[RMDB]
RNA sequence: GGGAACGACUCGAGUAGAGUCGAAAACGCCAAAUUGGUUUGAAAUUAAACGCAAUGUUAACGCUGAUCCAGAAGGUUAUACAAUGUCACAAAGUUCUAUCACCAAGGACUGGUUUAUGGUGCAAAUGGCAGCCAAUUAUAAUCAAGCAUAUCAGGGUCUUAAACGCCAUUUCGAUGGCGUUUAAGAAAAAGAAACAACAACAACAAC
Reactivity to DMS in 0.01 (KOAc 150mM, MgCl2 10mM, bicine 150mM(pH8.5), 24C), signal-to-noise 1, nucleotides 027 to 156: c030g060c050c010a030a140a100u010u000g000g010u020u000u000g010a080a080a120u000u000a090a020a070c010g020c020a090a110u010g000u000u010a060a070c030g040c040u020g010a110u010c050c070a120g010a080a050g000g030u010u000a050u000a010c140a110a090u000g030u000c080a070c050a020a060a070g010u010u000c020u000a020u000c070a030c070c040a070a070g010g040a080c030u000g010g000u010u010u010a100u030g020g040u000g010c070a030a040a100u010g010g050c000a070g010c060c020a060a050u000u000a060u000a050a090u000c100a040a040g040c020a030u000a050u000c060a060g020g000g000
Reactivity to 2A3 in 0.01 (KOAc 150mM, MgCl2 10mM, bicine 150mM(pH8.5), 24C), signal-to-noise 2, nucleotides 027 to 156: c000g010c000c000a040a000a040u080u120g070g030u120u050u050g090a080a090a040u180u130a100a090a000c080g000c090a050a040u100g000u080u080a000a050c050g010c110u040g010a100u020c030c000a020g020a100a030g050g000u030u040a030u000a040c070a060a030u020g110u130c100a020c040a080a020a020g010u010u010c000u010a030u070c030a000c050c000a040a030g020g020a020c000u010g000g000u000u000u090a050u060g020g000u000g000c010a000a030a140u030g040g000c040a030g010c000c000a000a010u090u070a020u020a090a050u070c100a040a000g000c000a020u040a000u210c020a000g090g000g000